Chemical mapping of a 177-nucleotide RNA with DMS and 2A3. Conditions: 150 mM KOAc, 10 mM MgCl2 and 150 mM bicine (pH 8.5), 24 C. DMS adducts were read by reverse transcription with MarathonRT. The 2A3 profile rests on 1,312 reads.

RNA sequence: GGGAACGACUCGAGUAGAGUCGAAAACUACCAUGUGAUAACCCUGAGACCAUGCUCAAUGUGGUGUAUGCAGGAUAUAUUAAGAAUAAAGAUGAAGCAUCUGAGGCCAACUCAGCUGGUCAAUUAAGUCCUAGCGAUAAUUCGUUAUCGCUAGGACAAAAGAAACAACAACAACAAC
Reactivity to DMS in 0.01 (KOAc 150mM, MgCl2 10mM, bicine 150mM(pH8.5), 24C), signal-to-noise 2, nucleotides 027 to 126: c080u020a100c070c000a130u030g010u010g000a030u000a060a060c080c020c010u000g000a260g050a060c040c040a010u010g040c120u010c190a060a080u000g020u000g000g010u010g010u050a070u010g000c000a010g030g000a100u050a030u000a120u000u000a050a090g030a110a120u000a050a050a100g030a170u000g000a140a060g010c050a040u000c030u000g000a140g000g000c060c150a020a120c000u000c120a030g000c050u000g000g010u000c060a020a100u020u010a070a180
Reactivity to 2A3 in 0.01 (KOAc 150mM, MgCl2 10mM, bicine 150mM(pH8.5), 24C), signal-to-noise 2, nucleotides 027 to 126: c030u060a080c000c030a120u170g030u040g090a050u040a050a080c020c000c010u010g030a030g000a040c010c100a040u130g000c020u060c200a090a160u230g030u030g000g040u010g060u120a060u120g030c020a040g000g080a060u060a000u000a010u080u200a160a080g100a110a120u180a210a060a020g160a080u100g080a080a010g030c000a010u050c010u090g030a110g000g010c080c030a080a080c050u010c030a000g000c040u000g000g000u010c000a030a040u210u100a120a020